Chemical mapping of a 207-nucleotide RNA with DMS and 2A3. Source: RMDB library M2RFPK, as collected in RNAgym. Reactivities are given for positions 27 through 156.
RNA sequence: GGGAACGACUCGAGUAGAGUCGAAAACACAAUUCUCUAAGCGAUGAGAAGCGUGUGGAAAAUUAGGGAAGGGCUACGGCUAUAAUCCUAGGAAAGCUUAUCUACAAGCGGAGGUAUUCUCAGAACGAAAACCAUUUGGCGUUCGCGCCAAAUGGAAGCUACGGUUAAUGUUCGCAUUAACCGUAGCAAAAGAAACAACAACAACAAC
Reactivity to DMS in 0.01 (KOAc 150mM, MgCl2 10mM, bicine 150mM(pH8.5), 24C), signal-to-noise 1, nucleotides 027 to 156: c010a010c020a030a180u000u000c010u000c010u020a190a150g030c150g000a260u000g000a070g000a060a030g000c260g000u000g090u000g040g000a080a070a120a110u000u000a070g020g090g010a150a050g010g000g010c090u000a060c120g020g010c000u000a170u010a070a080u010c010c010u020a030g010g000a070a070a200g000c030u000u000a100u000c090u000a110c020a010a030g030c100g010g010a040g000g000u010a040u000u020c000u020c000a090g000a120a060c050g010a100a060a190a100c010c000a010u000u000u030g000g000c000g000u020u000c300g000c040g090c000c000a000a000a000u020g020g010a020a080
Reactivity to 2A3 in 0.01 (KOAc 150mM, MgCl2 10mM, bicine 150mM(pH8.5), 24C), signal-to-noise 3, nucleotides 027 to 156: c030a000c010a010a050u080u030c030u000c010u080a230a160g140c090g110a080u080g010a090g000a020a020g010c030g020u030g000u060g020g040a110a050a020a040u140u110a080g030g000g030a050a050g060g010g000c010u070a010c090g030g000c000u030a030u040a270a030u080c010c010u030a040g050g040a100a040a000g000c020u050u060a040u160c040u080a030c030a120a030g020c020g030g020a020g060g040u090a090u120u020c050u030c020a080g060a100a020c080g040a050a020a040a040c010c010a010u000u000u000g010g000c010g020u050u050c200g030c000g000c100c000a000a000a000u000g000g010a000a000